[RMDB]
This 207-nucleotide RNA was probed chemically with 2A3 and DMS. DMS adducts were read by reverse transcription with MarathonRT. The DMS profile rests on 2,177 reads.
RNA sequence: GGGAACGACUCGAGUAGAGUCGAAAAGGUGGGACUUUUCCCUUGAGUUCAAGCGGUUGGACUCCGAGGGGAGUGUGAUCCUGCUACCGCCGUAGAAACUGGAUUACGACGUCUACCCGGGAUUCAAACUCGGCCCCUCUCAGAGGUGACUCUGAGCCACUAGGGAACUGUUCGCAGUUCCCUAGUGAAAAGAAACAACAACAACAAC
Reactivity to 2A3 in 0.01 (KOAc 150mM, MgCl2 10mM, bicine 150mM(pH8.5), 24C), signal-to-noise 4, nucleotides 027 to 156: g060g000u040g010g020g000a010c000u150u060u020u070c010c000c010u000u020g010a010g000u000u000c040a070a020g130c170g250g300u050u020g010g010a000c020u040c130c110g050a000g000g030g000g040a030g020u120g060u040g040a160u010c000c000u010g010c000u040a090c010c050g070c010c050g030u060a040g140a150a160a070c130u130g040g000a030u060u080a060c060g030a020c070g180u020c010u050a050c010c000c000g000g030g000a080u200u200c130a140a080a110c060u010c010g050g000c000c000c000c000u010c010u000c010a010g000a010g000g070u110g040a070c020u000c000u000g000a000g020c040
Reactivity to DMS in 0.01 (KOAc 150mM, MgCl2 10mM, bicine 150mM(pH8.5), 24C), signal-to-noise 1, nucleotides 027 to 156: g000g060u000g020g010g010a080c010u000u000u010u000c010c000c020u000u010g000a050g010u010u000c000a040a100g040c120g030g000u000u000g020g000a030c010u010c020c040g030a050g050g010g020g010a050g040u000g010u000g010a060u000c000c010u000g010c020u000a150c010c040g020c090c060g050u010a080g010a100a090a230c120u020g000g000a220u000u010a110c010g020a070c040g000u010c040u010a050c050c050c000g040g010g010a230u000u020c080a110a120a130c070u020c040g000g010c040c000c020c010u020c030u010c020a030g010a050g020g000u040g010a260c010u000c020u000g000a060g000c220
Overview
Values cover nucleotides 27 to 156. Conditions: 150 mM KOAc, 10 mM MgCl2 and 150 mM bicine (pH 8.5), 24 C.